Structure probing data (DMS and 2A3) for a 207-nucleotide construct.
Values cover nucleotides 27 to 156.
It was measured as part of the RMDB library OK3TST.
The DMS profile rests on 5,000 reads.
For 2A3, 2,510 sequencing reads were counted.
2A3 adducts were read by reverse transcription with SuperScript II with manganese.
[RMDB]
RNA sequence: GGGAACGACUCGAGUAGAGUCGAAAAUUCUGCAAUUGUAUUUGGUGCAGUGGCUCUAGGACAUGCCAGUUCAUUUGCUCCAGACUAUGCUAAAGCUAAGCUGUCUGCAGCCCACUUAUUCAUGCUGUUUGAAAGACAACCUCUGAUUGACAGCUACACAGAUAAGGAACUUCGGUUCCUUAUCUGUAAAAGAAACAACAACAACAAC
Reactivity to DMS in 0.01 (KOAc 150mM, MgCl2 10mM, bicine 150mM(pH8.5), 24C), signal-to-noise 2, nucleotides 027 to 156: u000u010c040u000g020c060a070a130u010u000g020u000a080u010u010u010g020g020u000g000c010a090g020u000g000g020c000u000c050u020a130g000g010a060c040a040u010g020c060c020a060g020u000u000c040a120u000u000u010g000c010u000c060c030a170g020a060c030u000a050u000g050c020u000a040a060a090g010c050u000a060a140g010c000u000g020u000c020u000g020c040a080g010c060c020c030a100c130u010u010a100u000u000c040a060u000g010c000u000g010u000u000u000g020a160a100a170g000a080c030a040a070c060c080u000c030u000g010a190u010u000g020a050c050a010g010c010u000a090c110
Reactivity to 2A3 in 0.01 (KOAc 150mM, MgCl2 10mM, bicine 150mM(pH8.5), 24C), signal-to-noise 5, nucleotides 027 to 156: u110u030c050u060g000c050a080a120u100u080g060u100a140u090u160u100g040g000u050g030c050a080g020u010g030g000c010u010c070u140a130g040g050a070c070a090u140g080c010c010a010g000u060u110c020a080u080u120u140g000c010u000c030c000a010g000a050c020u050a030u230g010c030u100a120a050a100g040c050u090a120a020g000c030u010g010u050c030u030g010c020a040g000c000c020c000a060c020u110u110a080u100u130c040a030u070g000c050u010g050u080u080u090g150a160a100a020g040a010c030a040a060c040c030u050c040u060g040a130u080u030g000a010c010a000g000c010u060a010c020